[RMDB]
RNA sequence: GGGAACGACUCGAGUAGAGUCGAAAAGAAAGAGGAUGAGCAGUGCUUUCCAGGACUGUCCAACCUGAGAAUGCUUGAGUUUUGGUCAAUCUCAGGUUCGUCAGCCCAUGAAAAACUGUCUCGCUAAGAUUACCCUCUGUUUCGACAGAGGGUAAUCAAAAGAAACAACAACAACAAC
Reactivity to 2A3 in 0.01 (KOAc 150mM, MgCl2 10mM, bicine 150mM(pH8.5), 24C), signal-to-noise 9, nucleotides 027 to 126: g100a020a080a010g160a060g150g020a170u150g010a050g000c000a010g000u040g050c160u000u010u000c020c030a020g010g010a040c000u000g000u000c020c010a000a000c000c000u010g000a000g010a050a050u100g050c070u140u090g110a140g220u200u130u210u280g110g020u140c030a050a060u000c000u000c000a000g000g000u000u000c000g000u000c000a000g000c000c000c000a040u050g000a000a000a000a000a000c020u030g050u120c000u020c010g020c010u040a080a020
Reactivity to DMS in 0.01 (KOAc 150mM, MgCl2 10mM, bicine 150mM(pH8.5), 24C), signal-to-noise 4, nucleotides 027 to 126: g020a050a050a070g020a110g010g000a070u020g010a010g000c000a010g000u000g000c170u010u000u010c100c150a210g000g010a030c000u000g000u010c010c080a010a010c010c000u000g000a010g000a030a050u010g010c060u020u010g010a120g010u020u020u050u030g010g000u000c070a050a050u000c000u000c000a010g020g010u010u000c300g000u010c010a000g010c010c000c000a190u030g000a040a020a030a080a010c000u000g000u020c010u000c030g000c110u020a050a100